[RMDB]
RNA sequence: GGGAACGACUCGAGUAGAGUCGAAAACAGCAUUCAAUCCUUCUAUGCCUUCUUUCGCCACCUGUUGAGGUCUUUCUUCUGAAACAAAGAAGAAAUAGACAAAUCAGACUUGCCCUCUUGGAAAUGUCAUACAUCUCUAUUUCGAUAGAGAUGUAUGAAAAGAAACAACAACAACAAC
Reactivity to DMS in 0.01 (KOAc 150mM, MgCl2 10mM, bicine 150mM(pH8.5), 24C), signal-to-noise 8, nucleotides 027 to 126: c090a100g010c080a070u010u010c080a090a090u010c030c020u010u000c050u000a090u010g000c020c030u000u000c040u000u000u000c060g010c030c030a080c060c020u000g010u000u000g010a130g000g010u000c020u000u010u000c000u000u000c000u000g000a130a120a130c300a080a130a050g000a010a010g000a010a020a050u020a050g010a030c020a050a100a070u010c040a060g000a070c040u000u000g000c010c010c010u000c050u000u000g010g010a050a060a100u020g010u010
Reactivity to 2A3 in 0.01 (KOAc 150mM, MgCl2 10mM, bicine 150mM(pH8.5), 24C), signal-to-noise 9, nucleotides 027 to 126: c030a010g070c030a050u080u110c040a050a110u040c020c010u060u040c030u080a080u120g020c000c000u050u050c010u020u090u050c030g020c020c000a060c010c010u040g040u090u070g080a050g020g060u000c000u000u010u000c000u010u000c000u010g080a120a110a080c070a070a200a020g010a000a000g020a010a020a020u160a020g010a010c010a010a090a020u060c010a010g060a070c010u030u060g020c000c010c000u040c010u020u030g050g030a080a100a050u150g060u010

An RNA of 177 nucleotides, treated with DMS and 2A3 and read out base by base. The reactions ran in a buffer of 150 mM KOAc, 10 mM MgCl2 and 150 mM bicine (pH 8.5), at 24 C. 2A3 adducts were read by reverse transcription with SuperScript II with manganese.